[RMDB]
RNA sequence: GGGAACGACUCGAGUAGAGUCGAAAAGGCACAUCAUGUCUUUCGUGGCUGGUGUGACCGCGCAAGGUGCGCGCGGUACGUAUCGAGCAGCGCUCAACUCUGAAAAACAUCAAGACCAUGUGUCUCUAUACUUCUUGGUUCGCCAAGAAGAAAAGAAACAACAACAACAAC
Reactivity to 2A3 in 0.01 (KOAc 150mM, MgCl2 10mM, bicine 150mM(pH8.5), 24C), signal-to-noise 9, nucleotides 027 to 129: g010g010c010a060c010a150u190c030a060u210g010u000c000u020u110u040c060g030u060g010g000c010u010g000g020u010g020u040g020a020c000c000g000c000g000c010a080a140g290g080u230g120c080g000c000g000c000g020g010u030a080c040g030u040a060u170c090g030a020g010c090a040g070c070g030c110u020c040a030a080c040u040c050u140g060a070a050a010a030a020c020a040u080c060a090a070g100a230c000c010a010u020g030u020g050u010c000u000c010u030a100u030a150
Reactivity to DMS in 0.01 (KOAc 150mM, MgCl2 10mM, bicine 150mM(pH8.5), 24C), signal-to-noise 8, nucleotides 027 to 129: g030g000c020a060c180a110u110c160a100u110g000u020c000u010u070u010c000g000u000g000g000c000u040g030g030u030g020u030g030a000c000c030g040c020g040c000a170a110g140g010u110g060c120g030c020g000c000g000g010u030a070c100g040u040a000u080c180g010a050g040c100a080g000c060g000c130u050c060a060a130c140u000c090u110g010a000a030a040a050a030c060a050u050c070a020a010g000a130c030c020a000u000g030u030g020u010c020u040c040u020a080u020a170